[RMDB]
RNA sequence: GGGAACGACUCGAGUAGAGUCGAAAAGGCUAGGUGGUAUUCCGGUGUGGGAUACUUGGUAAUAUGUAACGCUAAUUGCAUAAGAUUGUAGGACGGAAUAUACAGUCUUGGUUUUUAUAAACCUGAAAAAAGGAAUUACACUUCGGUGUAAUUCCAAGAAGCCUUAAAUCUUCGGAUUUAAGGCUUCAAAAGAAACAACAACAACAAC
Reactivity to 2A3 in 0.01 (KOAc 150mM, MgCl2 10mM, bicine 150mM(pH8.5), 24C), signal-to-noise 2, nucleotides 027 to 156: g040g000c020u050a030g110g000u090g040g030u070a060u030u070c030c010g030g030u100g030u070g130g070g010a040u050a080c020u040u060g030g010u020a080a030u040a070u160g050u030a060a010c060g000c160u040a070a070u100u060g000c000a030u020a090a030g040a100u040u080g010u080a040g020g070a020c040g030g010a030a000u040a000u010a080c020a030g030u010c000u030u030g000g000u060u040u000u020u030a170u110a120a020a010c000c010u050g030a010a030a000a000a040a130g010g010a000a000u000u010a000c000a000c010u010u070c120g000g000u010g000u000a000a000u000u000c010c000a000a030
Reactivity to DMS in 0.01 (KOAc 150mM, MgCl2 10mM, bicine 150mM(pH8.5), 24C), signal-to-noise 1, nucleotides 027 to 156: g000g010c060u000a060g050g000u000g010g010u000a080u020u010c030c070g010g020u020g020u000g000g020g030a100u000a010c090u010u000g000g020u000a080a110u000a070u010g020u000a110a060c110g020c070u020a050a080u020u000g000c000a070u010a030a020g000a020u000u000g010u000a020g000g010a250c020g000g000a120a100u000a090u010a070c050a050g020u000c000u000u010g000g010u000u000u040u000u000a060u010a090a050a040c020c020u000g000a000a040a050a070a110a250g000g010a050a010u000u000a010c000a020c010u010u000c300g110g070u000g030u000a010a020u000u010c000c010a020a090